[RMDB]
The data come from the RNA Mapping Database (RMDB), library M2RFPK. The record gives the reactivity of an RNA of 207 nucleotides to 2A3 and DMS. The RNA was probed in 150 mM KOAc, 10 mM MgCl2 and 150 mM bicine (pH 8.5) at 24 C. DMS adducts were read by reverse transcription with MarathonRT.
RNA sequence: GGGAACGACUCGAGUAGAGUCGAAAAAACGCGAAAGUCGUACGGCGGCCAUGAGUCGCAACGCAAAGCCGCGGCAAGUGGAGUUAGCGAGAAGAGACUAGGCUUUGGUUUCUUCAAGUGAAGCGGUAAAAGGUUCGAGACUUCGGUCUCGAACCAACAACACACCAUUCUUCGGAAUGGUGUGUUGAAAAGAAACAACAACAACAAC
Reactivity to 2A3 in 0.01 (KOAc 150mM, MgCl2 10mM, bicine 150mM(pH8.5), 24C), signal-to-noise 3, nucleotides 027 to 156: a000a000c110g020c010g040a170a050a020g110u140c040g050u170a150c170g120g000c010g020g030c020c000a240u250g000a020g030u030c000g000c010a020a000c010g030c050a050a090a030g020c050c010g000c050g000g020c060a060a090g040u080g090g090a100g050u160u210a030g090c000g010a010g010a040a000g000a000g000a000c010u010a020g060g080c030u110u100u070g000g000u000u010u000c010u000u000c010a050a000g000u030g060a090a020g010c010g010g050u070a060a090a010a080g000g010u000u000c000g000a000g000a000c000u050u120c290g040g000u000c010u000c000g000a000a000c000c000a000a010
Reactivity to DMS in 0.01 (KOAc 150mM, MgCl2 10mM, bicine 150mM(pH8.5), 24C), signal-to-noise 2, nucleotides 027 to 156: a040a050c030g000c000g000a060a080a130g020u010c040g000u010a100c090g020g030c020g040g000c060c010a090u000g000a220g030u000c010g040c020a040a030c050g020c040a120a100a200g030c040c010g000c010g010g030c060a120a240g000u010g020g000a100g040u020u000a240g000c040g020a300g010a080a040g040a020g030a000c010u000a030g050g000c130u020u020u000g050g010u010u000u010c000u010u000c010a080a300g040u000g000a090a110g000c020g060g040u000a030a080a130a140g020g030u000u000c000g000a020g010a040c000u000u010c300g070g000u000c000u000c000g000a010a000c000c020a000a010